[RMDB]
RNA sequence: GGGAACGACUCGAGUAGAGUCGAAAAUUCUUGCUUCUGUCUCCUAAGCAAUGGGUAGAUCUGGGACUUCAAGGUCCCCGUUUCAGGCUUGGCUACCAUCCUGGGGCUGGGGGUGGUGACUGCUUCUGUAGGUGGGCAUGUCUCUUCUGUCCAUCACCACGAAGACAAUGUUCGCAUUGUCUUCGUGAAAAGAAACAACAACAACAAC
Reactivity to 2A3 in 0.01 (KOAc 150mM, MgCl2 10mM, bicine 150mM(pH8.5), 24C), signal-to-noise 2, nucleotides 027 to 156: u060u030c020u040u040g000c010u050u040c040u070g100u000c020u040c080c030u090a120a000g000c060a090a120u110g010g010g060u060a060g020a180u040c070u080g000g000g040a040c020u120u100c300a120a080g090g020u020c010c010c000c010g000u000u060u060c020a020g020g030c060u050u100g000g020c040u060a090c010c010a030u020c010c010u050g030g000g020g000c040u050g030g010g040g010g000u050g000g020u040g030a070c020u040g010c000u050u050c020u080g060u020a080g040g000u040g010g000g010c020a040u110g090u060c020u030c000u160u010c030u010g020u020c010c000a030u040c000a020c020